The record gives the reactivity of an RNA of 177 nucleotides to 2A3 and DMS. The RNA was probed in 150 mM KOAc, 10 mM MgCl2 and 150 mM bicine (pH 8.5) at 24 C. Reactivities are given for positions 27 through 126. The 2A3 profile rests on 81,759 reads. DMS adducts were read by reverse transcription with MarathonRT.

RNA sequence: GGGAACGACUCGAGUAGAGUCGAAAACUGCCGACGCCCUGUGUUGAGGCGUGGUGACGCCUCGAGACAGUCGUUGAGAUGCCAGGAAGGGUGUACAUCUGACUGUUCGAGCAGAUGUGAGUCGAGGGCGUCUGGCUACGUUCGCGUGGCUGGGCGCAAAAGAAACAACAACAACAAC
Reactivity to 2A3 in 0.01 (KOAc 150mM, MgCl2 10mM, bicine 150mM(pH8.5), 24C), signal-to-noise 9, nucleotides 027 to 126: c020u040g020c010c010g020a020c010g040c010c070c010u040g010u020g040u060u060g010a010g000g000c010g000u010g040g100u090g050a020c000g000c000c000u000c000g000a010g010a000c010a000g010u030c010g010u010u020g060a110g000a130u040g010c010c010a050g100g130a070a070g140g020g000u050g020u040a010c000a010u000c040u120g080a170c010u040g130u280u170c080g080a020g000c010a010g010a060u080g040u040g050a040g030u060c050g020a100g020g090
Reactivity to DMS in 0.01 (KOAc 150mM, MgCl2 10mM, bicine 150mM(pH8.5), 24C), signal-to-noise 9, nucleotides 027 to 126: c030u010g000c050c010g000a020c020g000c090c130c010u010g010u000g010u010u010g010a010g000g010c000g030u000g010g020u040g010a040c010g010c010c000u000c000g010a030g000a020c010a020g010u040c020g010u010u010g000a130g000a070u010g000c030c040a110g010g030a100a090g000g000g010u010g010u010a030c010a010u000c010u020g010a080c020u010g010u020u030c150g010a120g000c020a010g000a030u010g010u010g000a090g010u000c020g010a150g010g000